[RMDB]
RNA sequence: GGGAACGACUCGAGUAGAGUCGAAAAGCCAUGAUAUUGGAAAAGCUCGCCACGCCGGUCAGGUUAAGGUCGAUUUCCACCUCGAUCCGGUCCUGUUCCAAGCCCUCGAAUGUCUCGGCGCGGGUCAGCGGUAAAUACCUUUCGAGGUAUUUACCGCAAAAGAAACAACAACAACAAC
Reactivity to DMS in 0.01 (KOAc 150mM, MgCl2 10mM, bicine 150mM(pH8.5), 24C), signal-to-noise 1, nucleotides 027 to 126: g020c030c010a070u000g000a170u000a110u010u000g020g010a030a070a120a120g010c040u010c080g010c050c050a130c080g010c020c010g040g000u000c070a000g000g020u000u010a050a080g010g010u010c080g020a150u020u020u010c040c030a040c030c090u000c040g010a040u000c040c020g040g000u010c030c040u000g030u000u010c050c000a130a080g000c030c020c010u000c050g000a040a060u000g020u010c050u000c050g010g000c040g030c080g000g020g010u010c160a080
Reactivity to 2A3 in 0.01 (KOAc 150mM, MgCl2 10mM, bicine 150mM(pH8.5), 24C), signal-to-noise 1, nucleotides 027 to 126: g050c020c010a020u080g070a080u110a160u230u160g040g010a130a090a080a020g020c030u030c050g000c000c020a030c040g000c000c030g070g010u010c010a010g110g020u200u170a070a020g020g030u080c030g040a060u100u140u000c010c040a010c040c000u040c000g070a040u050c010c010g080g000u000c040c000u070g040u070u000c010c010a060a020g020c020c000c000u060c040g040a210a090u260g060u040c010u010c140g000g000c020g000c010g030g000g010u050c030a000
Structure probing data (DMS and 2A3) for a 177-nucleotide construct. The RNA was probed in 150 mM KOAc, 10 mM MgCl2 and 150 mM bicine (pH 8.5) at 24 C. High 2A3 reactivity points to a flexible backbone, as in loops and unpaired stretches.